[RMDB]
RNA sequence: GGGAACGACUCGAGUAGAGUCGAAAAAAUGUCUGUUCUAGGGGGCUAUCUGGGAGAGGAAUUCUUCGGGAAAGGGACAUUUGAAAGAAGAUUCUUCAGAGAUGAGAAAGAACUUCAAGAAUACGAGCGCAACGUAUUAAUUCGUUAAUACGUUGCGAAAAGAAACAACAACAACAAC
Reactivity to DMS in 0.01 (KOAc 150mM, MgCl2 10mM, bicine 150mM(pH8.5), 24C), signal-to-noise 3, nucleotides 027 to 126: a050a050u010g010u000c050u010g000u000u000c080u010a100g010g000g000g000g010c080u000a040u040c070u000g000g010g000a100g000a090g020g010a050a050u050u030c040u000u000c080g000g000g010a100a070a080g000g000g000a050c060a080u010u020u020g000a100a110a120g000a020a010g000a110u000u000c000u000u010c020a070g000a200g000a150u000g000a120g010a080a030a040g000a020a030c020u010u000c000a080a080g000a090a050u040a050c180g010a120g000
Reactivity to 2A3 in 0.01 (KOAc 150mM, MgCl2 10mM, bicine 150mM(pH8.5), 24C), signal-to-noise 5, nucleotides 027 to 126: a000a010u090g010u010c030u020g070u120u050c030u130a040g000g050g010g000g000c040u060a110u090c060u100g030g020g000a070g000a020g030g090a070a070u190u070c050u110u110c060g020g000g040a040a050a050g060g000g010a000c020a040u040u140u150g130a110a070a030g000a000a020g050a230u020u000c000u010u010c020a040g040a070g030a220u150g020a100g090a040a090a020g020a020a000c000u000u000c020a030a020g110a130a040u220a180c130g030a060g000